[RMDB]
Conditions: 150 mM KOAc, 10 mM MgCl2 and 150 mM bicine (pH 8.5), 24 C. Structure probing data (DMS and 2A3) for a 177-nucleotide construct. It was measured as part of the RMDB library OK2TST.

RNA sequence: GGGAACGACUCGAGUAGAGUCGAAAAUAAAUAUCAGUGUUUGCCAGCUCUGAGCCUGUGCCAGGAUUCCAAGGGGACACCCUGCAGCUGGCCUUCAUUGACCUCAGACAGGUAAGAUGCACCGACACGUACUGCAUUUAUUCGUAAAUGCAGUACGAAAAGAAACAACAACAACAAC
Reactivity to DMS in 0.01 (KOAc 150mM, MgCl2 10mM, bicine 150mM(pH8.5), 24C), signal-to-noise 6, nucleotides 027 to 126: u020a070a080a130u010a100u000c020a050g010u000g010u000u000u000g010c020c010a140g010c110u010c060u010g000a060g020c130c080u010g000u010g030c020c020a020g000g000a150u010u010c140c090a210a050g020g010g000g000a150c300a060c020c020c010u000g020c180a050g010c000u000g000g020c000c050u000u000c110a050u010u010g000a040c150c010u010c040a060g010a060c080a070g020g000u010a050a050g020a130u010g010c030a070c020c030g010a080c200a170
Reactivity to 2A3 in 0.01 (KOAc 150mM, MgCl2 10mM, bicine 150mM(pH8.5), 24C), signal-to-noise 3, nucleotides 027 to 126: u070a000a060a030u200a060u110c030a030g020u010g000u040u070u060g010c000c000a040g030c070u000c020u030g030a030g010c020c050u100g040u120g040c030c010a040g040g030a110u240u030c090c050a060a040g040g000g010g000a010c030a080c050c010c000u020g030c040a030g030c000u000g020g000c010c000u030u010c010a080u020u140g060a060c000c010u020c000a020g000a090c020a020g000g030u040a070a030g090a110u110g020c020a020c010c020g070a020c030a000